[RMDB]
RNA sequence: GGGAACGACUCGAGUAGAGUCGAAAAUCCUAAGUCUUCGUAAGACAGGAUAAGUUCAUCGAAGAACUACGUCGGAAACGACGUAGGGAGAUGAACAUAUCCAAUGACGCGAAGAUAUGGAAAAACGAAACGUCAGGGAUUCGUCCCUGACGUUUCGGCCACUUAGUAGUUUCGACUACUAAGUGGCAAAAGAAACAACAACAACAAC
Reactivity to DMS in 0.01 (KOAc 150mM, MgCl2 10mM, bicine 150mM(pH8.5), 24C), signal-to-noise 1, nucleotides 027 to 156: u000c010c030u050a040a250g000u000c000u020u000c000g000u000a020a270g030a200c110a140g020g050a040u000a020a040g050u000u010c000a050u000c020g000a150a200g070a220a220c000u000a010c000g030u000c000g010g000a260a160a300c040g050a060c000g010u000a000g020g000g030a220g000a000u000g020a040a000c010a110u010a000u000c000c020a230a140u000g030a100c290g020c010g010a030a000g000a020u010a230u000g010g000a040a000a100a090a300c010g020a050a020a000c010g020u000c010a000g020g000g030a020u000u000c280g000u000c000c010c000u000g010a000c000g000u000u000u000c020g000
Reactivity to 2A3 in 0.01 (KOAc 150mM, MgCl2 10mM, bicine 150mM(pH8.5), 24C), signal-to-noise 4, nucleotides 027 to 156: u020c000c000u030a150a040g020u020c000u000u000c000g050u020a200a040g070a170c050a070g020g010a010u010a060a040g000u020u000c000a000u000c020g130a300a030g010a030a010c000u000a000c000g000u000c000g030g040a090a060a070c010g000a000c000g010u000a000g000g000g020a020g000a000u000g000a000a000c000a000u010a000u010c010c010a060a260u080g030a030c060g000c000g010a000a000g010a000u030a110u070g030g000a060a000a050a050a020c010g010a010a030a000c000g000u010c000a010g000g000g020a000u050u120c140g030u040c040c000c000u000g000a000c000g000u000u010u000c000g000
An RNA of 207 nucleotides, treated with DMS and 2A3 and read out base by base.
For DMS, 1,412 sequencing reads were counted.
Values cover nucleotides 27 to 156.
Source: RMDB library RNAMAK, as collected in RNAgym.
The RNA was probed in 150 mM KOAc, 10 mM MgCl2 and 150 mM bicine (pH 8.5) at 24 C.